This 177-nucleotide RNA was probed chemically with DMS.
RNA sequence: GGGAACGACUCGAGUAGAGUCGAAAACGGUGCCCACCGGUCCGGCCGCGCCGGGCAUCGUCGAAGACAUCGCCGACGCCGCGAUGAUCUUUUCGACGUCGCGGUUAAAGCCCUGGGGCAUAGCGCAUGAGUCAUCCGAAUUCGUUCGGAUGACUCAAAAAGAAACAACAACAACAAC
Reactivity to DMS in 0.01 (KOAc 150mM, MgCl2 10mM, bicine 150mM(pH8.5), 24C), signal-to-noise 1, nucleotides 027 to 126: c010g030g020u020g030c010c010c010a130c070c030g010g010u010c100c180g020g010c030c050g030c250g010c060c060g030g020g020c110a050u000c000g050u000c040g020a090a100g000a030c040a010u010c030g000c020c010g010a210c170g000c090c100g050c000g000a020u030g020a070u010c000u010u000u000u010c080g000a040c020g010u000c100g030c030g000g010u000u000a010a110a180g000c010c010c010u020g010g000g010g010c060a050u000a020g000c180g020c190a080